[RMDB]
RNA sequence: GGGAACGACUCGAGUAGAGUCGAAAAGAGAAGAACGUCCAUUACCAACUACAGCACAAAUUGCAAUGCAACAAGGUGAAAGUGUUGCUAAAAACAUUAAACGCAUCUUAAACGGUGAAUCAACUGACGGCAGAUAGACCUUCGGGUCUAUCUGCCGAAAAGAAACAACAACAACAAC
Reactivity to 2A3 in 0.01 (KOAc 150mM, MgCl2 10mM, bicine 150mM(pH8.5), 24C), signal-to-noise 1, nucleotides 027 to 126: g000a000g000a000a020g070a280a000c010g020u050c010c010a020u000u110a080c000c000a080a100c020u070a050c060a200g000c000a050c080a070a100a200u040u000g000c000a070a070u150g070c000a000a000c080a210a020g300g000u110g070a030a060a300g100u070g000u000u000g020c000u130a110a000a000a000a000c110a200u250u260a100a000a130c080g000c000a000u000c000u010u070a020a020a020c080g000g010u000g200a150a030u080c070a000a080c100u200g000a000